The record gives the reactivity of an RNA of 177 nucleotides to 2A3 and DMS. The DMS profile rests on 1,810 reads.
RNA sequence: GGGAACGACUCGAGUAGAGUCGAAAAUAUGCGCACUACACAUACUGAUAUUGGUGUCUACAUUAGUAUGUCACUUGUAUUAGUCAUUGUAGUGAAGAGAUUGUACAACCCAUCACUUUCUAACUUUAUUCCCUUUUAUGUUCGCAUAAAAGGGAAUAAAAGAAACAACAACAACAAC
Reactivity to 2A3 in 0.01 (KOAc 150mM, MgCl2 10mM, bicine 150mM(pH8.5), 24C), signal-to-noise 4, nucleotides 027 to 126: u160a060u090g100c050g010c000a000c010u010a000c000a000c010a020u080a020c000u010g000a010u030a010u040u040g020g010u010g000u010c000u000a000c000a090u090u050a100g010u030a040u250g030u030c000a000c020u020u020g010u010a010u000u010a000g010u010c070a010u040u010g000u010a000g000u040g000a030a020g040a010g020a020u070u140g040u090a040c030a080a120c050c010c000a030u100c030a050c070u070u170u060c080u100a110a100c030u030u010u000
Reactivity to DMS in 0.01 (KOAc 150mM, MgCl2 10mM, bicine 150mM(pH8.5), 24C), signal-to-noise 3, nucleotides 027 to 126: u000a060u010g040c190g010c000a010c000u000a000c000a010c250a070u000a040c010u000g010a000u010a000u000u010g010g000u000g020u000c020u000a040c010a190u000u010a120g020u010a000u010g010u000c010a000c010u000u000g020u010a020u000u000a000g020u000c150a090u010u000g020u000a010g010u000g010a050a080g030a130g000a050u010u010g000u010a100c150a100a170c000c000c000a150u000c150a110c120u000u000u010c020u010a080a130c160u010u000u000

The 2A3 profile rests on 4,699 reads.
It was measured as part of the RMDB library 15KREP.
The RNA was probed in 150 mM KOAc, 10 mM MgCl2 and 150 mM bicine (pH 8.5) at 24 C.